[RMDB]
RNA sequence: GGGAACGACUCGAGUAGAGUCGAAAAUACUUAGUACGCGCGUAGUUGCAGGCAUUCCGGGUGCAGCAACUGACGCGGAAGACUUUUCCCAGAGUGUGCGCUUCAACUGGCGUGCUGAGUAGUGCAAGAAUUGCACGUACGUUCGCGUACGUGCAAACUAGUUGAUGGAUUUCGAUCCAUCAACUAGAAAAGAAACAACAACAACAAC
Reactivity to DMS in 0.01 (KOAc 150mM, MgCl2 10mM, bicine 150mM(pH8.5), 24C), signal-to-noise 2, nucleotides 027 to 156: u010a080c050u000u010a090g040u000a050c000g010c020g040c040g010u000a050g010u000u000g010c050a160g010g010c000a030u000u010c020c300g000g020g180u000g000c000a300g000c000a020a020c000u010g010a030c000g030c030g030g010a060a150g000a130c090u000u010u000u010c000c000c010a210g000a130g010u000g010u010g000c010g030c030u030u000c040a130a160c150u000g020g010c020g000u010g000c010u010g000a130g040u010a080g020u010g000c050a120a150g020a070a180u010u000g000c010a000c000g000u000a000c000g030u000u010c300g010c000g060u000a000c000g000u000g020c010a000a010a100
Reactivity to 2A3 in 0.01 (KOAc 150mM, MgCl2 10mM, bicine 150mM(pH8.5), 24C), signal-to-noise 4, nucleotides 027 to 156: u070a000c000u010u010a010g010u020a000c010g010c000g000c000g040u020a010g010u010u000g010c030a090g100g000c020a020u120u100c110c200g210g020g000u020g000c020a000g000c010a020a010c000u040g180a020c010g010c020g020g010a010a020g160a090c050u130u120u050u040c010c010c000a000g000a020g010u110g000u030g010c090g010c100u070u080c090a210a200c050u020g010g000c000g020u010g000c000u000g010a000g010u050a020g030u050g040c050a080a030g050a100a100u060u020g000c000a000c000g000u000a000c000g010u020u040c230g000c000g060u000a010c000g000u000g000c000a000a000a010

Structure probing data (DMS and 2A3) for a 207-nucleotide construct. The 2A3 profile rests on 2,985 reads. The reactions ran in a buffer of 150 mM KOAc, 10 mM MgCl2 and 150 mM bicine (pH 8.5), at 24 C.